[RMDB]
RNA sequence: GGGAACGACUCGAGUAGAGUCGAAAACUUUUCAGACUUUAGAAGUGCCAAAAUGACGUACCUAACCCUCAUUACUUACCAGUCUCAUCUUCUACUCCAGAGGGUUGAGAGAAACCUAUCUAAGAGAAUCAGCAGUAUAUUUCGAUAUACUGCUGAUAAAAGAAACAACAACAACAAC
Reactivity to 2A3 in 0.01 (KOAc 150mM, MgCl2 10mM, bicine 150mM(pH8.5), 24C), signal-to-noise 9, nucleotides 027 to 126: c010u060u060u060u050c070a070g020a070c010u080u080u110a060g030a170a020g050u040g100c030c030a030a070a070a110u120g030a040c060g040u050a060c010c010u050a050a090c010c000c000u030c030a040u020u090a080c030u040u060a050c020c010a030g050u010c000u000c040a120u020c020u060u010c020u050a130c020u010c040c020a010g010a010g070g030g000u030u070g020a040g000a000g020a070a040a010c010c010u080a160u160c030u050a140a020g060a020g050a150
Reactivity to DMS in 0.01 (KOAc 150mM, MgCl2 10mM, bicine 150mM(pH8.5), 24C), signal-to-noise 6, nucleotides 027 to 126: c040u010u010u010u010c030a070g000a070c050u020u010u030a060g010a100a070g010u010g010c030c030a030a050a100a080u020g000a090c100g000u010a080c030c020u010a050a050c050c040c000u010c030a030u020u020a040c080u000u030a060c060c030a100g010u010c020u000c030a040u020c020u010u010c010u010a110c100u030c080c100a100g010a040g000g000g010u010u010g010a090g000a090g000a050a040a050c140c020u000a050u000c050u000a100a080g010a070g010a130

The data come from the RNA Mapping Database (RMDB), library OK1LIB. Structure probing data (2A3 and DMS) for a 177-nucleotide construct. For DMS, 14,682 sequencing reads were counted.